RNA sequence: GGGAACGACUCGAGUAGAGUCGAAAACUGCUAUGCCAUUGAUGGUGUUGCUGAAGCUGCUGCGUGUGUGUUCAAUUCAGCAUGUACUGUGCUAGAGGGUCUAGGUGGUAAACACACCUAUUGCUACUAUCGAAUUGAGCUUCGGCUCAAUUCGAUAAAAAGAAACAACAACAACAAC
Reactivity to DMS in 0.01 (KOAc 150mM, MgCl2 10mM, bicine 150mM(pH8.5), 24C), signal-to-noise 2, nucleotides 027 to 126: c090u010g010c080u000a050u000g000c020c010a110u000u010g010a120u000g020g010u000g000u000u000g000c030u000g000a120a100g010c020u000g000c040u000g000c080g020u000g010u000g020u000g000u000u010c060a060a160u010u010c050a010g040c040a040u010g000u000a080c160u020g010u000g000c050u010a070g000a100g000g020g000u010c220u010a050g020g000u010g000g000u010a110a090a120c170a020c020a030c010c030u010a070u000u010g010c090u000a090c130

Structure probing data (DMS) for a 177-nucleotide construct. For DMS, 1,520 sequencing reads were counted. The RNA was probed in 150 mM KOAc, 10 mM MgCl2 and 150 mM bicine (pH 8.5) at 24 C.